Annotation:
Structure probing data (2A3) for a 207-nucleotide construct. Conditions: 150 mM KOAc, 10 mM MgCl2 and 150 mM bicine (pH 8.5), 24 C. Source: RMDB library OK3TST, as collected in RNAgym. For 2A3, 542 sequencing reads were counted.
RNA sequence: GGGAACGACUCGAGUAGAGUCGAAAAGCGCCGUUCCAAAUCCGGCGUACUCGGCAGGAUAAUUUGCAGCAUAUGUCGCUCCGCUAAUUUCUUUGAACCCUUCUGUUUCGGGUGUGACACUUGCACGGUAGACACCAUCACGAACCGCACGGAAUGAGAACUACUGGUUCUUCGGAACCAGUAGUUCAAAAGAAACAACAACAACAAC
Reactivity to 2A3 in 0.01 (KOAc 150mM, MgCl2 10mM, bicine 150mM(pH8.5), 24C), signal-to-noise 1, nucleotides 027 to 156: g040c020g010c010c020g010u030u110c170c060a080a150a050u060c130c010g020g000c000g010u060a070c020u020c030g030g000c020a030g040g090a060u110a180a060u230u070u020g070c030a030g000c010a020u060a050u280g060u060c050g000c000u030c040c020g030c080u070a140a050u050u090u040c070u000u070u120g170a140a170c020c000c000u100u100c040u120g080u060u050u110c040g010g040g010u050g020u030g030a000c000a020c100u100u140g040c080a050c100g030g000u020a050g040a040c040a020c050c000a060u120c020a000c080g060a210a020c050c000g030c030a030c030g100g040a090a050u200g010a080